Structure probing data (2A3 and DMS) for a 207-nucleotide construct. Values cover nucleotides 27 to 156. Reactivities are rounded to 0.1 and cut off at 0 and 3.
RNA sequence: GGGAACGACUCGAGUAGAGUCGAAAAGGGGUCGAAUGUUUAGCGUUUAGGGAGCUUGGAUUUAUACACUGAAGCCUCCACGGUGUAUUGUCAGCUCCCUUGACGCUACACAUUCGACGGAGGCACCCAAACAUAGUGAUGUUCGCAUCACUAUGAACUUCAAAUAAUCGUUCGCGAUUAUUUGAAGAAAAGAAACAACAACAACAAC
Reactivity to 2A3 in 0.01 (KOAc 150mM, MgCl2 10mM, bicine 150mM(pH8.5), 24C), signal-to-noise 3, nucleotides 027 to 156: g060g000g020g010u000c000g000a010a010u000g000u020u030u000a000g000c010g000u010u020u040a010g010g000g000a020g010c050u100u140g110g000a070u180u300u090a010u040a000c000a010c000u020g070a140a050g060c000c040u040c030c010a020c020g000g010u000g010u000a010u010u010g010u010c000a000g000c000u000c000c010c000u000u000g000a000c000g010c000u000a000c020a000c000a000u000u010c000g000a000c020g000g010a000g020g000c030a070c020c010c000a020a070a000c010a010u000a000g000u000g000a000u020g030u090u060c270g000c070a000u010c000a000c000u000a000u000g010a040a040
Reactivity to DMS in 0.01 (KOAc 150mM, MgCl2 10mM, bicine 150mM(pH8.5), 24C), signal-to-noise 1, nucleotides 027 to 156: g050g010g030g020u010c000g000a020a000u020g010u000u000u000a010g010c010g040u000u000u000a040g020g020g010a030g030c010u010u010g040g020a040u000u010u000a010u010a010c000a020c010u000g000a060a120g020c050c030u000c030c040a300c020g020g030u010g040u000a010u000u010g000u000c000a020g000c000u000c000c000c000u000u000g000a000c000g020c010u010a020c050a040c030a040u000u000c040g000a010c000g020g000a020g080g030c040a240c030c030c010a110a120a280c000a000u000a010g010u000g010a040u000g000u000u020c300g080c000a020u000c000a020c000u000a000u000g010a050a250
Annotation: For 2A3, 5,868 sequencing reads were counted. For DMS the reverse transcriptase was MarathonRT.